The record gives the reactivity of an RNA of 207 nucleotides to 2A3. The RNA was probed in 150 mM KOAc, 10 mM MgCl2 and 150 mM bicine (pH 8.5) at 24 C. The 2A3 profile rests on 1,046 reads. Source: RMDB library RNAMAK, as collected in RNAgym.
[RMDB]
RNA sequence: GGGAACGACUCGAGUAGAGUCGAAAAUGAUAUUCGUAUCAAUCUUUGGGGUCGAUCGAUGAAAGAGGCUGGAGUAGCAACUGAAGCCUCCACGGUUGGCUACGUUGAAAGCCUCUGGAGAUCGACGGAGGCACCCGGAAUCCAUAUUCGUAUGGAAUACUCUUUCAAGGUUCGCCUUGAAAGAGUAAAAAGAAACAACAACAACAAC
Reactivity to 2A3 in 0.01 (KOAc 150mM, MgCl2 10mM, bicine 150mM(pH8.5), 24C), signal-to-noise 2, nucleotides 027 to 156: u090g010a010u020a040u090u140c120g030u060a020u100c030a120a100u070c120u130u220u300g110g030g040g050u020c000g000a010u000c030g190a260u020g010a010a000a000g000a000g020g000c020u000g000g000a000g000u000a000g000c000a010a000c000u000g020a150a010g030c010c000u000c000c000a020c000g030g070u030u010g300g030c010u000a000c000g160u250u030g000a000a000a000g000c000c090u000c000u010g000g000a020g010a000u000c000g020a020c010g000g000a010g000g010c000a000c010c030c000g040g140a090a100u020c010c010a000u020a030u070u180c160g060u050a010u010g020g000a020a070